[RMDB]
RNA sequence: GGGAACGACUCGAGUAGAGUCGAAAAGUCUGAUCGGCGACGAUGCCUAGGCGGAUUUGGAAAUGGAACGUCGUCCCCAAUCCGGGUUGACUUUCAACCCAAACGCGACCAUCCAUCAACUCGAUCAUAGACUUAACCGUUUCGACGGUUAAGUCUAAAAAGAAACAACAACAACAAC
Reactivity to DMS in 0.01 (KOAc 150mM, MgCl2 10mM, bicine 150mM(pH8.5), 24C), signal-to-noise 2, nucleotides 027 to 126: g000u000c050u010g000a070u020c080g010g000c110g010a150c200g010a080u010g010c050c010u000a090g010g000c060g010g000a150u010u000u000g000g000a090a150a060u000g000g000a040a140c180g010u000c030g000u010c020c020c040c090a060a080u010c260c170g000g000g000u000u010g000a050c160u000u010u000c000a030a080c120c000c030a020a050a040c130g000c030g020a070c020c040a090u000c030c010a020u000c030a020a210c170u000c020g000a030u000c060a130
Reactivity to 2A3 in 0.01 (KOAc 150mM, MgCl2 10mM, bicine 150mM(pH8.5), 24C), signal-to-noise 1, nucleotides 027 to 126: g010u000c030u050g020a020u030c030g020g060c030g000a050c160g040a080u160g010c000c030u090a110g100g000c000g040g020a060u040u020u120g010g010a050a170a210u040g020g000a040a060c040g020u010c000g000u010c080c010c000c010a020a100u070c030c040g000g000g000u000u110g050a090c020u040u120u020c040a040a070c000c000c000a010a010a010c040g010c000g070a160c000c040a040u080c000c010a010u000c010a020a040c040u000c030g080a010u080c030a060

An RNA of 177 nucleotides, treated with DMS and 2A3 and read out base by base.
DMS adducts were read by reverse transcription with MarathonRT.
The 2A3 profile rests on 1,198 reads.
High 2A3 reactivity points to a flexible backbone, as in loops and unpaired stretches.
For DMS, 1,284 sequencing reads were counted.